[RMDB]
RNA sequence: GGGAACGACUCGAGUAGAGUCGAAAAAUCUCUGAAAAGAGUCGGUGCAUUCAUUAAAGCUACGUAAUGCGACGAUCUUGUUUGCAGCUGAUACCGCAUCGCUCGGGGAGAACGUCGUUCUCCUCGACUCAGAUACAGGCUUCGGCCUGUAUCUGAGAAAAGAAACAACAACAACAAC
Reactivity to DMS in 0.01 (KOAc 150mM, MgCl2 10mM, bicine 150mM(pH8.5), 24C), signal-to-noise 1, nucleotides 027 to 126: a090u000c000u010c000u000g010a110a110a050a110g010a020g010u000c000g020g000u000g000c010a040u010u000c060a140u010u020a110a070a060g000c150u010a090c180g010u020a040a020u000g000c010g000a030c060g010a070u020c060u000u010g020u000u000u000g020c040a050g000c050u010g010a050u010a120c150c080g000c120a060u000c020g020c220u000c000g020g000g000g030a020g000a020a010c020g010u010c210g010u000u010c000u010c000c000u000c020g010a010
Reactivity to 2A3 in 0.01 (KOAc 150mM, MgCl2 10mM, bicine 150mM(pH8.5), 24C), signal-to-noise 1, nucleotides 027 to 126: a000u000c010u030c000u010g060a060a080a040a060g010a000g030u030c000g090g000u070g000c020a040u060u020c010a000u090u210a250a090a050g070c030u030a040c100g120u170a020a090u100g010c020g000a000c020g020a120u090c020u080u110g150u150u090u150g000c010a020g010c030u030g020a000u020a090c000c070g040c060a050u040c090g040c050u030c000g000g000g000g000a000g000a000a000c020g300u160c060g000u060u010c000u000c040c000u000c010g010a000

Source: RMDB library RFMREP, as collected in RNAgym. Structure probing data (DMS and 2A3) for a 177-nucleotide construct. The DMS profile rests on 955 reads. The reactions ran in a buffer of 150 mM KOAc, 10 mM MgCl2 and 150 mM bicine (pH 8.5), at 24 C. Values cover nucleotides 27 to 126.